[RMDB]
RNA sequence: GGGAACGACUCGAGUAGAGUCGAAAAGUUAUGCUCUCGCUGCCUAAUGGCGGUGCGGGAAACCCACUCUAAAGUCCUUUGGGUUAGCCCCUUAAGGCGGGGUUCGGAGGCACCUGGCAACAGAAGCUGAAACUGUGCACAUUCGUGUGCACAGUAAUGACCAGCAAAUAUUCGUAUUUGCUGGUCAAAAAGAAACAACAACAACAAC
Reactivity to 2A3 in 0.01 (KOAc 150mM, MgCl2 10mM, bicine 150mM(pH8.5), 24C), signal-to-noise 1, nucleotides 027 to 156: g030u090u020a130u300g030c000u000c000u000c000g010c010u040g000c020c050u190a300a260u230g040g000c010g000g080u010g000c000g000g000g000a010a040a030c050c000c000a080c030u120c040u190a210a070a290g300u020c000c000u000u000u000g000g000g000u040u020a050g020c000c000c000c000u030u040a000a000g000g000c000g000g000g000g020u000u010c120g090g020a030g010g000c010a010c000c010u050g300g000c000a010a010c000a020g000a010a010g000c020u010g020a110a000a000c000u000g000u000g040c000a000c000a000u030u050c130g110u040g000u000g030c000a000c030a000g000u030a000a010